This 177-nucleotide RNA was probed chemically with 2A3. 2A3 adducts were read by reverse transcription with SuperScript II with manganese. Source: RMDB library OK1LIB, as collected in RNAgym. The reactions ran in a buffer of 150 mM KOAc, 10 mM MgCl2 and 150 mM bicine (pH 8.5), at 24 C.
RNA sequence: GGGAACGACUCGAGUAGAGUCGAAAAUGUAAAUGGUAGUAUCACCGUCAUCUCUUUUAUCAGCAAUUUUCAUUAUUUAUUGUUGACGUGAUAAAGAAUAUGCAUAUAAAUAAAUCAAAAACCACAGAUUACCGCACGCAUUCGUGCGUGCGGUAAUAAAAGAAACAACAACAACAAC
Reactivity to 2A3 in 0.01 (KOAc 150mM, MgCl2 10mM, bicine 150mM(pH8.5), 24C), signal-to-noise 1, nucleotides 027 to 126: u190g000u150a250a220a140u160g020g000u000a030g040u040a000u000c020a000c030c030g090u000c000a000u030c040u000c000u000u000u000u290a020u030c000a060g120c020a030a030u000u240u000u070c190a190u000u120a130u120u300u160a020u300u220g000u000u000g000a000c000g000u040g080a000u150a040a060a000g060a000a000u230a000u150g030c000a080u000a040u060a130a300a000u130a030a050a000u060c110a090a190a000a160a190c140c160a040c000a100g070